[RMDB]
RNA sequence: GGGAACGACUCGAGUAGAGUCGAAAAUUUGCAUGGAUAAUUCAUCCAUGCACAUCUCACUUUAUUGGACCUUCAAGAUUGGUUUCCCAUGUAAUUUAAUUUUCUCUCCUCUACAUUUAAUAUGUUCGACUUAGGAUAGGUUCGCCUAUCCUAAGUCAAAAGAAACAACAACAACAAC
Reactivity to 2A3 in 0.01 (KOAc 150mM, MgCl2 10mM, bicine 150mM(pH8.5), 24C), signal-to-noise 2, nucleotides 027 to 126: u050u030u040g000c000a000u000g000g020a000u070a140a300u300u280c090a000u000c000c000a000u000g070c000a020c000a010u000c010u000c000a030c060u100u120u110a120u050u080g070g000a080c020c000u000u020c080a080a080g010a300u000u040g110g030u060u060u020c010c000c030a010u070g050u100a070a090u050u040u250a050a100u030u030u090u020c050u000c010u040c040c010u040c040u040a020c050a040u060u140u030a130a080u140a080u130g030u070u080c010
Reactivity to DMS in 0.01 (KOAc 150mM, MgCl2 10mM, bicine 150mM(pH8.5), 24C), signal-to-noise 1, nucleotides 027 to 126: u010u010u000g010c000a020u020g000g010a050u000a080a140u000u010c250a100u000c000c000a010u000g010c010a030c170a030u000c030u000c020a070c130u000u010u010a070u030u010g010g000a110c060c080u010u020c060a060a070g000a070u010u010g020g000u000u000u000c040c020c010a120u000g030u010a040a030u010u010u010a040a100u000u010u000u000c010u000c050u000c040c040u000c100u000a040c010a060u000u000u030a110a100u010a080u010g000u010u000c140